[RMDB]
RNA sequence: GGGAACGACUCGAGUAGAGUCGAAAAGAUAUGGAGGUCGAGGAUCAAGUUGAUCGAUGAAAUCGGAAACGAUGGAGAUCUCUUGGGAGACCUCCUAAGUCAAAAGCAUACUGUUCGCAGUAUGCAAUCUUAUUGUUUUGUUCGCAAAACAAUAAGAAAAAGAAACAACAACAACAAC
Reactivity to 2A3 in 0.01 (KOAc 150mM, MgCl2 10mM, bicine 150mM(pH8.5), 24C), signal-to-noise 5, nucleotides 027 to 126: g030a030u090a070u210g000g010a000g010g000u010c030g100a300g070g020a030u020c000a000a010g090u260u060g060a000u010c030g060a220u050g010a030a020a000u010c010g010g020a050a030a050c010g010a010u020g000g000a020g000a010u000c010u000c000u010u000g010g000g000a040g000a000c000c000u000c000c000u000a010a000g010u000c010a030a030a000a110g000c000a000u010a010c000u010g040u070u150c300g000c140a000g000u010a000u000g000c000a000a000
Reactivity to DMS in 0.01 (KOAc 150mM, MgCl2 10mM, bicine 150mM(pH8.5), 24C), signal-to-noise 8, nucleotides 027 to 126: g010a040u000a300u010g000g000a000g010g010u000c000g010a100g010g000a070u010c000a000a020g000u010u000g010a010u000c000g000a090u010g000a070a120a020u000c000g000g000a140a110a170c010g010a020u000g000g000a060g000a000u000c000u000c000u000u000g000g000g000a060g010a010c000c000u000c000c000u000a000a070g010u010c030a080a090a110a150g010c000a000u000a000c000u000g010u000u010c210g010c000a010g000u000a000u000g000c000a050a030